An RNA of 177 nucleotides, treated with DMS and read out base by base. The reactions ran in a buffer of 150 mM KOAc, 10 mM MgCl2 and 150 mM bicine (pH 8.5), at 24 C. Values cover nucleotides 27 to 126. It was measured as part of the RMDB library TTRINS. For DMS, 4,184 sequencing reads were counted.
[RMDB]
RNA sequence: GGGAACGACUCGAGUAGAGUCGAAAAGAUAUGGAUGUACCUAGUACGUAUGACAGCGUUGAAAAGCUCCUUUCUCGGAAACGAGAAAGGAGCUUGGAGCUGCAUACGGACCAGUACAUCCUAAGUCGAAAGCUACUAAGUUCGCUUAGUAGCUUUCAAAAGAAACAACAACAACAAC
Reactivity to DMS in 0.01 (KOAc 150mM, MgCl2 10mM, bicine 150mM(pH8.5), 24C), signal-to-noise 3, nucleotides 027 to 126: g010a070u010a300u020g000g010a000u000g010u000a000c150c070u010a060g020u000a070c000g010u000a010u000g000a200c010a010g030c010g010u010u000g020a160a140a020a010g030c000u010c000c010u000u010u000c000u000c010g000g000a110a090a250c000g000a010g000a000a000a000g000g000a000g000c000u000u000g010g000a110g030c000u010g000c000a010u000a010c000g010g000a020c090c200a130g000u000a000c010a000u000c000c000u000a010a080g010u000c120